[RMDB]
RNA sequence: GGGAACGACUCGAGUAGAGUCGAAAACGGCGCAGCACUAUGCGACAACGACGACGACCUACUGCUCGUCUCCGAAGAAGGCCAGUCGAUUCGCUUCAACGCCAACGACGACCAACUGCGCCCCAUGUACAAAUGGCUCUUUCGAGAGCCAUUUGUAAAAAGAAACAACAACAACAAC
Reactivity to 2A3 in 0.01 (KOAc 150mM, MgCl2 10mM, bicine 150mM(pH8.5), 24C), signal-to-noise 2, nucleotides 027 to 126: c030g060g030c000g010c010a000g020c030a020c210u140a130u300g070c030g090a070c030a080a030c040g050a010c020g020a020c000g050a030c000c170u180a150c070u120g060c060u000c020g040u000c020u080c070c060g030a090a000g050a050a040g030g010c010c030a030g010u030c020g070a300u010u040c000g050c000u120u220c050a140a090c050g000c030c000a030a020c000g010a000c020g000a010c000c000a040a060c010u000g000c020g000c010c050c000c010a110u150g050
Reactivity to DMS in 0.01 (KOAc 150mM, MgCl2 10mM, bicine 150mM(pH8.5), 24C), signal-to-noise 2, nucleotides 027 to 126: c250g000g000c010g030c030a040g030c150a160c180u000a090u020g020c060g000a110c110a010a120c080g000a030c080g010a050c040g000a050c060c190u010a110c140u010g000c170u000c000g000u020c050u010c060c050g000a060a220g000a140a210g000g040c010c010a110g050u000c010g000a120u010u000c230g000c000u000u000c240a110a140c170g020c020c070a030a050c050g000a010c040g000a100c000c040a060a110c030u000g010c050g010c040c010c010c040a070u020g030